[RMDB]
RNA sequence: GGGAACGACUCGAGUAGAGUCGAAAAAGGCUAGUUCCAAGGUCUCGGCGUAGGUCUUGGACCGCCGUUGCGUGGAGCGUUGCGUCCACAGCGAUGGUGGACGGUUGUGGAGACAGCAGCUCCAUACGCGGGUAUCGUCGUUCGCGAUGGUACCCGCAAAAGAAACAACAACAACAAC
Reactivity to 2A3 in 0.01 (KOAc 150mM, MgCl2 10mM, bicine 150mM(pH8.5), 24C), signal-to-noise 9, nucleotides 027 to 126: a000g030g000c030u050a040g040u160u010c000c000a010a000g000g010u000c000u000c030g300g050c130g160u300a010g000g000u000c000u000u010g000g000a000c000c010g000c000c000g030u030u090g050c060g010u020g000g000a010g000c040g200u300u160g000c000g030u010c000c000a010c000a000g010c000g100a120u190g010g080u080g080g040a060c080g040g020u020u010g000u000g000g020a010g000a040c040a050g000c000a010g000c000u000c000c000a000u020a010c050
Reactivity to DMS in 0.01 (KOAc 150mM, MgCl2 10mM, bicine 150mM(pH8.5), 24C), signal-to-noise 6, nucleotides 027 to 126: a050g000g000c010u000a070g010u050u000c000c000a010a000g000g000u010c000u000c020g020g050c220g030u070a020g000g010u010c000u000u000g000g000a010c040c300g000c000c000g010u010u020g000c100g010u000g010g020a020g010c000g010u010u020g000c120g000u000c000c000a000c000a010g000c040g010a130u020g000g020u010g010g010a050c030g000g000u020u000g010u000g000g010a060g000a130c010a080g010c000a100g010c000u000c000c000a010u010a020c160
About this RNA: The record gives the reactivity of an RNA of 177 nucleotides to 2A3 and DMS. The RNA was probed in 150 mM KOAc, 10 mM MgCl2 and 150 mM bicine (pH 8.5) at 24 C. For DMS, 29,103 sequencing reads were counted. For 2A3 the reverse transcriptase was SuperScript II with manganese.